[RMDB]
RNA sequence: GGGAACGACUCGAGUAGAGUCGAAAAGCCGAAGAGUUCGCUCUUCGGCGACGAAUUUGGCGUAGAUGAGAGUCUACAGUACUAGCCAUCGCAGAUGUACAAAUAAGCAUUGCUUCGGCAAUGCUAAGCACAUUAACGGUUUCGACCGUUAAUGUGCAAAAGAAACAACAACAACAAC
Reactivity to 2A3 in 0.01 (KOAc 150mM, MgCl2 10mM, bicine 150mM(pH8.5), 24C), signal-to-noise 2, nucleotides 027 to 126: g020c000c000g000a010a000g030a000g020u130u180c240g020c090u000c000u000u000c000g000g070c010g000a000c000g080a050a160u140u080u170g040g000c050g000u000a010g000a030u020g040a010g010a010g110u000c000u030a010c000a000g030u040a020c040u060a020g040c000c030a070u050c090g000c110a050g050a230u120g010u070a040c040a040a130a040u140a130a010g020c000a000u000u000g020c000u010u090c270g080g000c020a000a010u020g010c010u020a010a010
Reactivity to DMS in 0.01 (KOAc 150mM, MgCl2 10mM, bicine 150mM(pH8.5), 24C), signal-to-noise 2, nucleotides 027 to 126: g000c000c020g010a010a000g020a020g090u000u000c250g020c030u010c000u000u000c010g020g000c000g000a040c080g000a100a110u000u010u010g010g010c030g020u000a020g020a030u010g030a220g000a260g000u000c000u000a020c000a120g000u000a030c110u000a180g000c000c000a060u000c080g010c130a130g020a100u010g040u000a050c080a070a120a080u010a120a050g010c000a030u000u000g000c000u000u010c220g020g010c000a020a010u000g000c000u000a020a090

The record gives the reactivity of an RNA of 177 nucleotides to 2A3 and DMS. The data come from the RNA Mapping Database (RMDB), library M2PK50. The DMS profile rests on 1,600 reads. Conditions: 150 mM KOAc, 10 mM MgCl2 and 150 mM bicine (pH 8.5), 24 C.